Notes
Structure probing data (DMS and 2A3) for a 177-nucleotide construct. 2A3 adducts were read by reverse transcription with SuperScript II with manganese. Source: RMDB library OK2TST, as collected in RNAgym. For 2A3, 2,230 sequencing reads were counted. The DMS profile rests on 5,118 reads.
[RMDB]
RNA sequence: GGGAACGACUCGAGUAGAGUCGAAAAGACACUUGCCGGGAGUGUAUGGAUAGGCUUAUCGAGGGCGGGUUCAACGGCGUUGUGAGCGUGUUGAGGGUUCUCGCGGAGACGGGUAGGAUGGGCCCCGACUAGGCAUCAAUUUCGAUUGAUGCCUAGUAAAAGAAACAACAACAACAAC
Reactivity to DMS in 0.01 (KOAc 150mM, MgCl2 10mM, bicine 150mM(pH8.5), 24C), signal-to-noise 3, nucleotides 027 to 126: g010a100c060a030c040u000u010g030c030c020g010g000g000a080g010u000g000u000a060u000g010g010a120u000a070g010g000c070u000u010a070u000c070g030a090g000g010g010c060g010g010g000u010u000c050a050a060c060g010g010c020g010u000u000g010u000g010a110g020c050g000u010g020u000u000g010a110g020g000g010u000u000c020u010c030g020c120g010g010a100g010a100c090g000g000g000u000a060g020g000a070u000g010g000g010c050c010c020c060g010
Reactivity to 2A3 in 0.01 (KOAc 150mM, MgCl2 10mM, bicine 150mM(pH8.5), 24C), signal-to-noise 2, nucleotides 027 to 126: g060a010c000a000c060u030u070g000c060c010g070g030g000a020g040u060g000u100a130u120g040g040a030u040a160g040g000c070u100u100a140u090c020g020a050g020g050g060c110g010g030g070u070u050c030a050a000c040g060g010c020g060u040u100g100u090g100a090g020c050g020u090g030u030u060g020a070g000g000g000u040u040c030u000c010g080c060g020g030a030g010a020c020g010g000g030u070a050g040g070a050u050g000g000g050c040c000c010c000g020